[RMDB]
RNA sequence: GGGAACGACUCGAGUAGAGUCGAAAAUGGGUCGGAUCGAUCCGCGCGAUCAAGUUGAAGAACUGGGUGGCCACGCUGACGCUGAGCCUGAAGAAGGACGUCACGCUACCGAAAAAUGCCACCGCCAGACCCUAGGCAAUUUCGAUUGCCUAGGGUCAAAAGAAACAACAACAACAAC
Reactivity to 2A3 in 0.01 (KOAc 150mM, MgCl2 10mM, bicine 150mM(pH8.5), 24C), signal-to-noise 2, nucleotides 027 to 126: u160g020g020g020u050c020g090g000a170u030c020g050a040u000c090c030g070c070g040c150g060a070u030c030a030a060g010u030u150g240a080a150g000a010a020c050u060g040g000g010u000g000g000c000c130a040c070g020c050u020g000a000c000g080c090u110g000a050g170c000c000u080g000a110a100g050a030a010g000g020a140c000g020u070c050a010c130g000c010u080a080c000c080g040a080a060a110a060a000u230g040c000c000a000c000c000g050c000c000a000
Reactivity to DMS in 0.01 (KOAc 150mM, MgCl2 10mM, bicine 150mM(pH8.5), 24C), signal-to-noise 1, nucleotides 027 to 126: u060g000g040g000u020c020g000g000a090u040c160g030a000u000c010c000g020c160g000c120g000a020u010c060a040a020g020u000u000g020a170a020g050a040a060c070u000g010g000g020u000g000g020c020c300a110c120g000c010u040g010a020c020g030c160u010g000a070g000c010c000u030g080a040a070g000a120a030g150g060a220c000g000u000c000a020c000g000c110u000a040c110c070g020a050a080a050a190a050u020g030c000c000a000c000c040g000c140c000a170